[RMDB]
RNA sequence: GGGAACGACUCGAGUAGAGUCGAAAAGAUAUGGACCCAUACAGCUUUUGACGGAACGGUCGGAAACGACCGUCCGAUAAGCUGAUGGGUCCUAAGUCAAAGAGCCUAUCGUUCGCGAUAGGCUCAAGAUAUAAUACCGCUUCGGCGGUAUUAUAUCAAAAGAAACAACAACAACAAC
Reactivity to 2A3 in 0.01 (KOAc 150mM, MgCl2 10mM, bicine 150mM(pH8.5), 24C), signal-to-noise 3, nucleotides 027 to 126: g000a000u020a000u070g000g000a010c000c020c020a020u180a190c010a030g030c010u110u260u300u300g220a090c020g010g030a100a030c010g010g000u020c010g010g020a040a020a000c000g000a000c000c000g000u000c000c000g000a010u060a150a010g000c010u010g000a000u000g000g020g000u020c000c000u000a000a000g020u010c000a050a060a170g000a000g000c000c000u010a000u000c010g060u110u080c300g000c020g140a000u000a020g010g000c000u000c000a000a000
Reactivity to DMS in 0.01 (KOAc 150mM, MgCl2 10mM, bicine 150mM(pH8.5), 24C), signal-to-noise 4, nucleotides 027 to 126: g000a030u010a270u010g000g000a020c000c000c000a000u000a130c010a010g010c000u010u000u010u010g010a260c070g010g010a050a050c000g000g000u000c000g010g000a040a040a110c000g010a010c000c000g010u000c000c000g010a080u010a030a030g020c000u000g000a030u000g000g000g010u000c000c000u000a000a050g000u000c020a080a140a150g000a010g000c000c000u000a010u000c000g010u000u020c240g030c010g000a010u000a000g000g010c010u000c000a010a030
An RNA of 177 nucleotides, treated with 2A3 and DMS and read out base by base.
Source: RMDB library TTRDEL, as collected in RNAgym.
The 2A3 profile rests on 6,057 reads.
For DMS, 7,268 sequencing reads were counted.
For DMS the reverse transcriptase was MarathonRT.
The RNA was probed in 150 mM KOAc, 10 mM MgCl2 and 150 mM bicine (pH 8.5) at 24 C.